[RMDB]
RNA sequence: GGGAACGACUCGAGUAGAGUCGAAAAUGUCGCGAAGAGUUCGGCUCUGUCAGCCCGGCUGGGUCCGGGUGGGGGCCGGCACAGAGGGACACACCGGGCCGGGGCGCCGAGGAUAGCUACCGCCCGCUCGCCUCAUCGCAUUCGUGCGAUGAGGCGAAAAAGAAACAACAACAACAAC
Reactivity to 2A3 in 0.01 (KOAc 150mM, MgCl2 10mM, bicine 150mM(pH8.5), 24C), signal-to-noise 1, nucleotides 027 to 126: u090g000u000c060g000c060g280a100a140g040a000g030u150u250c000g000g010c000u000c000u010g300u180c050a070g000c000c000c000g000g000c070u300g100g000g000u030c000c000g000g010g000u030g000g000g000g000g000c000c000g000g040c000a000c000a000g110a000g010g080g000a000c000a000c010a000c070c000g000g010g000c020c020g000g000g000g000c000g070c010c010g030a080g040g010a090u120a160g020c000u150a290c000c000g000c020c000c000g000c120